[RMDB]
RNA sequence: GGGAACGACUCGAGUAGAGUCGAAAAGAUAUGGAAAGCACCGGUGCAUCGAUCUACAAUCGGAAACGAUUGUAGGGAGCACGGUGCCUUUCCUAAGUCAAAACCGGGGAGCUUCGGCUCCCCGGAACACAUAUGCUUAGUUCGCUAAGCAUAUGUGAAAAGAAACAACAACAACAAC
Reactivity to DMS in 0.01 (KOAc 150mM, MgCl2 10mM, bicine 150mM(pH8.5), 24C), signal-to-noise 4, nucleotides 027 to 126: g000a010u000a040u000g000g000a010a010a030g010c000a010c000c000g040g030u000g050c000a300u010c220g000a020u020c000u000a000c000a000a000u000c000g010g000a020a020a020c010g010a010u000u000g000u000a000g000g010g010a010g040c000a090c010g010g010u000g000c130c030u000u000u000c000c000u000a000a100g000u010c000a120a050a130a200c010c000g000g000g000g010a030g020c010u000u010c300g030g010c000u000c000c000c000c000g000g000a010a050
Reactivity to 2A3 in 0.01 (KOAc 150mM, MgCl2 10mM, bicine 150mM(pH8.5), 24C), signal-to-noise 4, nucleotides 027 to 126: g000a000u020a000u030g000g020a010a010a000g000c000a000c030c080g150g120u190g020c030a120u300c130g000a010u000c000u010a000c000a000a010u000c000g010g000a000a000a000c000g010a000u000u000g000u000a000g000g000g000a010g010c020a020c090g000g000u000g000c000c000u010u000u000c000c000u000a000a000g010u000c010a010a020a150a240c010c010g000g000g010g020a020g010c030u190u220c300g300g000c000u090c000c000c000c020g000g000a000a000